[RMDB]
Chemical mapping of a 207-nucleotide RNA with 2A3. The reactions ran in a buffer of 150 mM KOAc, 10 mM MgCl2 and 150 mM bicine (pH 8.5), at 24 C. Values cover nucleotides 27 to 156.
RNA sequence: GGGAACGACUCGAGUAGAGUCGAAAACCCAGUUCCGGGGCCGUUCACUGGAUCCGAAGCCUCUAGAAGGAUAAUAUAGGCACUCCAUACCCAACUCCGACUCAAUACGUCCCCGUCGUACAGAAUGCAAGGGCAUCCCUGUUCGCAGGGAUGCCAACGUACGAAGAGUGUUCGCACUCUUCGUACGAAAAGAAACAACAACAACAAC
Reactivity to 2A3 in 0.01 (KOAc 150mM, MgCl2 10mM, bicine 150mM(pH8.5), 24C), signal-to-noise 1, nucleotides 027 to 156: c010c000c000a000g030u190u000c000c000g090g000g000g000c010c010g010u080u070c040a030c030u070g010g010a020u070c010c010g040a050a020g080c030c000u080c050u080a210g120a300a080g130g020a050u040a300a000u100a030u100a080g010g000c010a010c080u030c000c000a080u110a080c020c010c000a000a040c100u010c000c030g120a100c000u010c110a090a160u060a080c000g000u030c000c010c020c000g030u060c040g000u100a010c010a070g080a120a210u120g020c070a050a050g080g000g000c000a000u030c000c000c000u080g060u100u070c240g000c040a000g000g070g000a000u000g000c000c000a000a000